[RMDB]
The record gives the reactivity of an RNA of 207 nucleotides to 2A3.
The reactions ran in a buffer of 150 mM KOAc, 10 mM MgCl2 and 150 mM bicine (pH 8.5), at 24 C.

RNA sequence: GGGAACGACUCGAGUAGAGUCGAAAACGGUUGAUCCUCGUCUCCUCGUUAAUCUACCUGUUCGGCGAAUCCGUAUUCGAUGCCGUCGAGAUUAUCCGGGGGUCGGGGCAAGAACAGGAGCACGAACACGAACAGAAUCAGGACGCGGAUGCGGACGGUGUAGGUUAGCUUUCGAGCUAACCUACACAAAAGAAACAACAACAACAAC
Reactivity to 2A3 in 0.01 (KOAc 150mM, MgCl2 10mM, bicine 150mM(pH8.5), 24C), signal-to-noise 2, nucleotides 027 to 156: c050g060g000u020u080g060a070u070c010c000u000c010g020u000c100u080c040c000u010c010g010u040u020a000a000u000c010u070a250c080c020u190g100u160u110c010g000g000c070g040a110a160u080c060c080g100u210a230u100u280c130g050a130u080g070c090c000g010u020c050g000a010g000a030u040u020a000u060c090c070g050g000g000g040g000u000c020g010g010g040g000c040a020a000g000a050a000c000a110g010g080a030g000c100a020c070g070a060a030c020a000c120g060a130a030c000a000g080a080a120u030c040a080g030g000a020c020g040c050g110g030a000u100g040c000g020g040a010c050g030